[RMDB]
RNA sequence: GGGAACGACUCGAGUAGAGUCGAAAAGAGCUGGAGGAUCCGUACGAGAAGAUCGGCGCCGAGCUGGUCAAAGAGGUAGCCAAGAAGACCGAUGACGUCGCCGGUGACGGCACCACGACGGCCACCGCACGGCCGGAUGGUUCGCCAUCCGGCCGUGAAAAGAAACAACAACAACAAC
Reactivity to DMS in 0.01 (KOAc 150mM, MgCl2 10mM, bicine 150mM(pH8.5), 24C), signal-to-noise 1, nucleotides 027 to 126: g000a070g020c000u010g060g000a200g010g040a020u000c000c020g000u030a090c000g010a270g030a080a100g000a060u080c060g000g000c030g000c010c080g000a300g000c000u050g030g040u000c010a000a120a100g000a070g000g000u040a060g000c000c020a080a210g000a070a070g000a070c000c010g000a070u000g000a050c090g000u000c050g000c150c050g000g000u030g060a030c160g000g090c090a080c190c000a070c120g000a080c090g000g080c000c010a170c000c000g000
Reactivity to 2A3 in 0.01 (KOAc 150mM, MgCl2 10mM, bicine 150mM(pH8.5), 24C), signal-to-noise 1, nucleotides 027 to 126: g010a010g000c030u010g050g000a000g100g040a080u060c030c020g000u170a150c050g110a090g010a170a070g040a090u070c040g010g020c000g000c000c020g010a150g000c020u010g000g000u000c000a000a140a000g090a010g000g090u210a040g000c040c000a100a040g090a100a000g020a000c040c000g000a000u070g050a020c050g060u090c000g030c020c000g050g000u100g100a020c050g000g000c000a030c040c010a120c000g070a000c030g020g040c010c030a070c000c000g080

The record gives the reactivity of an RNA of 177 nucleotides to DMS and 2A3. DMS adducts were read by reverse transcription with MarathonRT.